RNA sequence: GGGAACGACUCGAGUAGAGUCGAAAAGAUAUGGAUAACGAAGAACUUCUGUGCGUUGAAACGCUUCGGAAACGAAGCGUGGAGCAUUGAAGGGAGUUAUCCUAAGUCAAAGGCUCCUUCGGGAGCCGCUCUACUACUAGUUCGCUAGUAGUAGAGCAAAAGAAACAACAACAACAAC
Reactivity to 2A3 in 0.01 (KOAc 150mM, MgCl2 10mM, bicine 150mM(pH8.5), 24C), signal-to-noise 9, nucleotides 027 to 126: g020a020u090a040u200g000g010a000u020a020a010c060g140a300a280g060a180a070c010u010u010c020u050g030u010g000c030g280u300u080g020a050a050a000c000g000c000u000u000c000g030g010a060a070a060c010g000a000a000g000c000g010u000g010g010a020g000c000a000u010u060g000a000a010g020g010g010a090g000u000u000a000u000c000c000u010a170a030g050u030c060a240a090a060g010g000c000u010c010c000u070u130c300g090g000g000a010g000c000c000
Reactivity to DMS in 0.01 (KOAc 150mM, MgCl2 10mM, bicine 150mM(pH8.5), 24C), signal-to-noise 8, nucleotides 027 to 126: g000a050u000a300u010g000g000a020u000a010a010c010g000a190a170g000a160a240c010u000u000c010u000g020u000g010c000g020u010u020g000a200a160a020c010g000c000u000u000c000g020g000a110a100a190c000g000a010a010g010c010g010u000g000g000a100g010c000a010u000u000g000a010a020g000g000g000a150g010u000u000a010u000c000c000u000a040a110g000u000c030a120a140a200g010g010c000u000c000c000u000u010c200g030g000g000a010g020c000c010
Structure probing data (2A3 and DMS) for a 177-nucleotide construct. For 2A3 the reverse transcriptase was SuperScript II with manganese. Conditions: 150 mM KOAc, 10 mM MgCl2 and 150 mM bicine (pH 8.5), 24 C. Values cover nucleotides 27 to 126.